Structure probing data (DMS and 2A3) for a 177-nucleotide construct.
It was measured as part of the RMDB library M2PK50.
Reactivities are given for positions 27 through 126.
[RMDB]
RNA sequence: GGGAACGACUCGAGUAGAGUCGAAAACCCACGUGGUUCGCCACGUGGGAAAUAAAUUCAGCGGUAAUUCGAGGCCAAAUAUUACCGCAGAUGGCCUCGAAAAAAGUACACAGUUCGCUGUGUACAACUUUGUAUCCAUGUUCGCAUGGAUACAAAGAAAAGAAACAACAACAACAAC
Reactivity to DMS in 0.01 (KOAc 150mM, MgCl2 10mM, bicine 150mM(pH8.5), 24C), signal-to-noise 3, nucleotides 027 to 126: c000c000c000a000c010g060u000g030g000u000u020c190g020c000c000a000c010g030u020g010g000g000a000a020a060u010a060a080a120u000u000c100a070g010c030g020g000u000a080a140u000u000c020g000a020g000g030c000c000a030a110a160u000a070u000u000a150c050c070g020c090a040g010a140u000g010g010c000c000u010c030g000a000a020a030a070a030a110g000u010a000c010a010c000a020g000u000u010c220g020c000u010g010u000g030u000a000c000a050a050
Reactivity to 2A3 in 0.01 (KOAc 150mM, MgCl2 10mM, bicine 150mM(pH8.5), 24C), signal-to-noise 4, nucleotides 027 to 126: c010c000c000a000c000g000u000g000g070u040u060c170g050c080c000a000c010g010u020g010g000g020a020a060a020u170a010a060a030u150u080c050a030g030c020g070g030u110a090a140u050u020c010g000a010g010g000c000c000a050a080a000u230a080u090u120a070c020c020g010c020a010g020a040u030g000g000c000c000u000c000g000a010a000a000a000a000a000g010u000a000c010a000c000a000g020u060u070c140g010c140u000g000u000g000u000a000c000a000a030